[RMDB]
RNA sequence: GGGAACGACUCGAGUAGAGUCGAAAAGCGUGCGGGAUGAAGGCCUUCGGGUUGUAAACCGCUGUCAGAGGGGAUGAAAUCGUUGGGGGCUAUCCCCCUUCGUUGACAGAGCCUCAGAGGAAGCGCGCUAUGUUCUACGAUUCGUCGUAGAACAUAGAAAAGAAACAACAACAACAAC
Reactivity to 2A3 in 0.01 (KOAc 150mM, MgCl2 10mM, bicine 150mM(pH8.5), 24C), signal-to-noise 9, nucleotides 027 to 126: g020c020g030u080g000c010g010g020g010a070u300g050a190a010g010g010c010c010u050u100c220g110g000g000u020u030g000u010a000a000a000c000c000g000c010u010g020u010c010a010g000a000g010g000g000g020a030u010g020a050a050a020u040c010g000u000u000g010g000g000g020g020c150u170a250u300c000c000c000c000c010u000u000c010g010u020u010g020a020c000a000g000a010g090c000c000u000c010a010g010a010g040g040a060a010g010c010g000c000g000
Reactivity to DMS in 0.01 (KOAc 150mM, MgCl2 10mM, bicine 150mM(pH8.5), 24C), signal-to-noise 9, nucleotides 027 to 126: g010c000g010u000g000c010g000g000g000a040u050g020a300a300g000g000c000c000u010u050c180g020g010g010u000u010g000u010a020a300a300c020c000g010c010u000g010u010c020a140g000a030g000g010g000g010a300u000g000a070a140a030u000c010g020u000u000g000g000g020g010g010c300u030a240u040c010c010c000c000c000u000u000c000g010u000u000g010a250c010a010g000a300g000c010c000u010c010a050g000a120g000g010a180a180g000c020g010c010g000
The record gives the reactivity of an RNA of 177 nucleotides to 2A3 and DMS. Conditions: 150 mM KOAc, 10 mM MgCl2 and 150 mM bicine (pH 8.5), 24 C.